[RMDB]
RNA sequence: GGGAACGACUCGAGUAGAGUCGAAAACUCAAGGCCUUCGGGCCUUGAGAAAAGGCAUCGUAUCUUUGCUUCGAAGCCAAACAUGAAACAUGAAAGCUGAGAAAAGUUUUGGGUUCGCCCAAAACAAGAAGAUAUAAAUCUUCGGAUUUAUAUCUUCAAAAGAAACAACAACAACAAC
Reactivity to 2A3 in 0.01 (KOAc 150mM, MgCl2 10mM, bicine 150mM(pH8.5), 24C), signal-to-noise 5, nucleotides 027 to 126: c000u000c000a000a010g000g000c010c030u150u210c300g050g000g000c020c000u000u010g000a000g000a000a050a000a010g030g000c010a020u020c050g030u080a050u030c030u040u070u090g000c010u030u020c020g030a040a010g000c010c000a060a110a010c060a060u170g100a200a140a050c030a030u080g070a140a060a010g000c040u030g010a000g040a040a090a070a070g010u020u000u010u010g030g010g010u020u050c170g090c000c000c020a000a000a000a010c000a000a030
Reactivity to DMS in 0.01 (KOAc 150mM, MgCl2 10mM, bicine 150mM(pH8.5), 24C), signal-to-noise 3, nucleotides 027 to 126: c000u000c000a010a000g000g010c010c010u000u010c210g040g010g020c000c010u000u000g000a000g000a020a050a110a130g010g010c020a080u000c050g010u000a040u010c030u000u000u010g010c040u000u000c010g020a110a060g010c000c020a050a100a200c090a050u010g010a140a100a110c100a050u000g000a040a140a080g010c000u000g000a110g010a110a070a080a100g000u000u000u000u020g010g000g010u000u010c220g010c000c000c000a000a000a000a000c000a060a100
The record gives the reactivity of an RNA of 177 nucleotides to 2A3 and DMS.
The DMS profile rests on 3,233 reads.
Source: RMDB library M2PK50, as collected in RNAgym.
The reactions ran in a buffer of 150 mM KOAc, 10 mM MgCl2 and 150 mM bicine (pH 8.5), at 24 C.
The 2A3 profile rests on 6,858 reads.